Source: RMDB library RFM100, as collected in RNAgym. This 177-nucleotide RNA was probed chemically with DMS. The RNA was probed in 150 mM KOAc, 10 mM MgCl2 and 150 mM bicine (pH 8.5) at 24 C. The DMS profile rests on 873 reads.
[RMDB]
RNA sequence: GGGAACGACUCGAGUAGAGUCGAAAAUCGAGCGAAGCGAGUGAGCCCGAGGUCCCUAGAAAAACCCCUAGGCAGGCGCCAUCGCGCCCGUACCGCAAACCGACACAGGUGGGUGGGUAGAACAUACUUGGUACAACUGCUUCGGCAGUUGUACCAAAAAAGAAACAACAACAACAAC
Reactivity to DMS in 0.01 (KOAc 150mM, MgCl2 10mM, bicine 150mM(pH8.5), 24C), signal-to-noise 1, nucleotides 027 to 126: u000c000g010a150g020c010g000a030a080g000c090g000a060g010u060g000a260g000c040c040c010g000a060g000g050u000c010c000c030u000a170g000a080a080a090a230a100c060c000c020c080u060a100g000g000c060a040g020g060c070g000c000c050a060u000c120g000c070g110c040c010c140g100u000a050c060c020g040c060a000a110a160c000c030g000a010c140a050c110a160g000g000u010g000g000g040u000g000g000g000u000a040g000a040a050c090a060u080a090c090